[RMDB]
RNA sequence: GGGAACGACUCGAGUAGAGUCGAAAAUAAGUCAGGAUCUCCCUGGUUGAGGGAGAAGUUUGAGAUGCCUUGGGUUCAUCAGACACCCCUUUUCAGGCUACGAAUGAGACUCCCACAAAGGGAUGGGUCUUCCCGCACAAUUCGUUGUGCGGGAAGAAAAAGAAACAACAACAACAAC
Reactivity to DMS in 0.01 (KOAc 150mM, MgCl2 10mM, bicine 150mM(pH8.5), 24C), signal-to-noise 1, nucleotides 027 to 126: u000a100a170g020u000c080a080g020g010a120u000c010u000c030c000c000u000g000g020u000u010g020a060g010g000g000a020g000a030a050g000u000u000u000g010a100g000a060u000g030c060c100u010u010g000g010g020u020u030c040a130u010c180a110g000a070c270a100c030c000c000c090u000u000u000u000c190a040g000g020c000u010a080c070g000a070a060u000g000a070g000a220c040u000c000c020c000a060c200a040a040a130g000g000g000a070u010g010g010g010